[RMDB]
RNA sequence: GGGAACGACUCGAGUAGAGUCGAAAAAGUAGGCACCUUGGUCUCUUUGGGCUAAUCUCUGGCUCCUCUGCACUAACUCUUGCUCUCACCCAGCUAAUCCCUGCCUCGCCCUGGCUGCCCCAGGGGCAUUGGAAGGCGGUUUCGACCGCCUUCCAAUAAAAGAAACAACAACAACAAC
Reactivity to 2A3 in 0.01 (KOAc 150mM, MgCl2 10mM, bicine 150mM(pH8.5), 24C), signal-to-noise 2, nucleotides 027 to 126: a000g170u120a060g020g000c000a050c010c000u030u060g040g010u090c010u020c000u100u050u080g020g000g000c010u040a020a170u110c070u040c030u040g020g030c030u020c030c000u000c000u000g010c030a030c060u100a180a010c010u060c010u070u040g020c000u030c000u000c010a020c000c010c000a000g000c010u040a070a070u030c000c000c010u020g030c030c000u020c030g010c000c000c000u030g000g020c030u150g100c050c000c000c000a010g000g000g010g040c000
Reactivity to DMS in 0.01 (KOAc 150mM, MgCl2 10mM, bicine 150mM(pH8.5), 24C), signal-to-noise 1, nucleotides 027 to 126: a000g040u030a060g000g020c060a000c020c000u020u020g000g000u020c010u000c010u000u010u000g010g020g020c040u020a070a070u030c040u030c070u000g020g000c020u080c010c040u000c060u040g000c070a160c000u000a060a130c030u000c090u040u020g000c000u000c040u000c060a040c050c030c010a050g000c050u000a080a060u000c060c010c020u030g020c070c030u000c080g020c040c010c000u000g000g010c120u000g020c050c010c000c040a100g000g110g000g040c100